[RMDB]
Record summary: Structure probing data (DMS) for a 207-nucleotide construct. The DMS profile rests on 1,893 reads.
RNA sequence: GGGAACGACUCGAGUAGAGUCGAAAAACAGGCCGAUAUACUCUACGGAGUAUAUCGGCCUGAUCUGUUUUUCGAACAGAUGUAAAUCGAAGAGCUCUGCGAUCAGGUACGCCUGAUCGCAGUGCAAAAAAUCUUGGUUGCUUCGGCAACCAAGAAAGGUAUUAAGUAACUUCGGUUACUUAAUACCAAAAGAAACAACAACAACAAC
Reactivity to DMS in 0.01 (KOAc 150mM, MgCl2 10mM, bicine 150mM(pH8.5), 24C), signal-to-noise 1, nucleotides 027 to 156: a140c010a040g000g030c030c000g020a060u010a000u020a020c000u000c010u000a160c300g050g010a040g040u010a030u000a010u000c000g020g060c020c010u000g010a000u000c010u010g010u000u000u000u020u000c250g010a060a040c010a000g000a080u000g010u000a020a120a090u000c070g020a130a130g000a290g010c010u000c000u010g010c000g010a040u010c000a000g020g020u000a050c300g030c000c010u010g030a000u000c030g000c000a000g000u000g030c010a020a010a080a100a110a070u000c000u000u010g010g020u000u000g000c010u000u040c300g030g010c030a010a010c000c000a000a010g000a000a060a070
Source: RMDB library M2RFPK, as collected in RNAgym.